Structure probing data (DMS) for a 177-nucleotide construct.
The data come from the RNA Mapping Database (RMDB), library TTRINS.
In probing experiments dimethyl sulfate is read out at A N1 and C N3, which are open when not base-paired.
Conditions: 150 mM KOAc, 10 mM MgCl2 and 150 mM bicine (pH 8.5), 24 C.
RNA sequence: GGGAACGACUCGAGUAGAGUCGAAAAGAUAUGGAGGGACCAGAUGGAGGCUGAAACCUCGACGAAGGCUUUCGGAAACGAAAGCCAGAGAGGUACGCAGCCGUUGAAAUCUGGUCCCUCCUAAGUCCAUAGAGAUGAAGUUCGCUUCAUCUCUAUGAAAAGAAACAACAACAACAAC
Reactivity to DMS in 0.01 (KOAc 150mM, MgCl2 10mM, bicine 150mM(pH8.5), 24C), signal-to-noise 5, nucleotides 027 to 126: g010a120u010a300u010g010g010a020g020g000g000a010c000c000a020g000a010u000g010g020a070g020g030c010u010g010a020a050a040c000c000u000c000g000a220c300g000a150a100g010g010c000u000u000u000c000g010g000a110a080a240c000g010a000a020a000g010c000c000a000g010a080g000a010g000g010u000a030c300g000c000a020g000c000c000g010u000u020g010a130a130a010u000c000u000g000g010u000c000c000c000u000c000c000u000a010a080g000u000c040